[RMDB]
RNA sequence: GGGAACGACUCGAGUAGAGUCGAAAACUUACCAGCAUGUGACGCAGACUACUCAUAAACGUAUCAUUGCUAUCAACAACUACAUUUGUAGUGUUGAGAACUGCAAUGAGGAUAAUGUUGAAAAACUAUUCAUCUCAGGCACAGCGAUUUAUUGUGAACACCCUUCCAAAUUCGUUUGGAAGGGUGUAAAAGAAACAACAACAACAAC
Reactivity to DMS in 0.01 (KOAc 150mM, MgCl2 10mM, bicine 150mM(pH8.5), 24C), signal-to-noise 3, nucleotides 027 to 156: c060u000u000a110c020c020a090g040c040a070u000g020u000g030a010c040g010c050a200g010a100c010u010a060c030u010c020a130u000a050a160a080c060g010u000a170u000c010a010u000u000g010c020u000a150u000c020a010a010c020a040a080c000u000a020c010a300u010u000u000g050u000a010g000u000g010u010u010g000a020g000a120a120c090u000g020c000a040a020u000g010a040g000g020a100u000a050a130u000g020u000u010g010a080a110a080a060a030c030u000a100u010u000c050a120u010c050u000c010a110g020g030c060a030c040a070g050c030g000a120u000u000u020a080u010u010g020u010g010a100
Reactivity to 2A3 in 0.01 (KOAc 150mM, MgCl2 10mM, bicine 150mM(pH8.5), 24C), signal-to-noise 2, nucleotides 027 to 156: c010u050u060a120c060c010a000g040c030a070u030g040u020g080a010c020g000c010a000g020a040c030u130a010c000u000c050a140u150a130a190a000c050g080u070a010u020c000a000u020u000g000c000u010a000u020c000a000a000c010a020a090c000u030a000c010a190u120u100u300g000u000a010g000u000g000u000u000g000a000g010a050a040c010u010g030c000a000a000u000g000a020g000g000a060u060a140a150u100g020u010u000g040a030a040a000a000a000c020u070a080u000u060c020a040u000c030u000c020a000g010g000c000a010c000a010g030c000g010a000u000u150u050a100u180u280g110u000g000a000
Structure probing data (DMS and 2A3) for a 207-nucleotide construct. 2A3 adducts were read by reverse transcription with SuperScript II with manganese. Conditions: 150 mM KOAc, 10 mM MgCl2 and 150 mM bicine (pH 8.5), 24 C. Source: RMDB library OK3TST, as collected in RNAgym. Reactivities are given for positions 27 through 156.